The data come from the RNA Mapping Database (RMDB), library OK2TST. The record gives the reactivity of an RNA of 177 nucleotides to DMS and 2A3.

RNA sequence: GGGAACGACUCGAGUAGAGUCGAAAACGGAGCACAAUAUUUUCGCUUACACGGUCGAGAAUUCUGGCCUUAGAGCAUUUCCAGCAAAAAUGUGAAACGGUUUUGCGUUGGAUAAUGCGACAAAACAUCAUUAGUACUCGUUCGCGAGUACUAAUGAAAAAGAAACAACAACAACAAC
Reactivity to DMS in 0.01 (KOAc 150mM, MgCl2 10mM, bicine 150mM(pH8.5), 24C), signal-to-noise 5, nucleotides 027 to 126: c090g020g010a070g040c080a130c130a090a090u010a050u000u000u010u000c030g010c030u000u000a080c220a090c160g000g020u010c010g000a060g010a080a090u000u010c080u000g000g000c010c050u000u000a060g010a260g020c000a020u000u000u000c010c000a090g020c020a010a050a010a020a030u010g020u000g010a100a090a160c220g000g000u010u000u000u010g010c110g020u010u010g000g000a020u000a010a010u000g000c010g010a140c180a040a040a070a070c300a130
Reactivity to 2A3 in 0.01 (KOAc 150mM, MgCl2 10mM, bicine 150mM(pH8.5), 24C), signal-to-noise 5, nucleotides 027 to 126: c050g090g020a040g030c050a050c080a300a060u070a120u160u060u050u060c020g000c020u040u110a070c090a030c130g080g000u130c040g030a010g060a140a120u110u000c050u090g050g000c030c000u070u120a140g010a010g040c000a000u020u000u000c000c000a000g010c010a020a010a010a020a020u080g060u170g180a170a130a130c110g050g000u050u010u000u020g050c050g080u090u060g010g000a020u060a180a010u040g000c010g020a030c030a010a100a010a020c030a040
Background:
2A3 adducts were read by reverse transcription with SuperScript II with manganese. For 2A3, 4,293 sequencing reads were counted. Reactivities are given for positions 27 through 126. DMS adducts were read by reverse transcription with MarathonRT.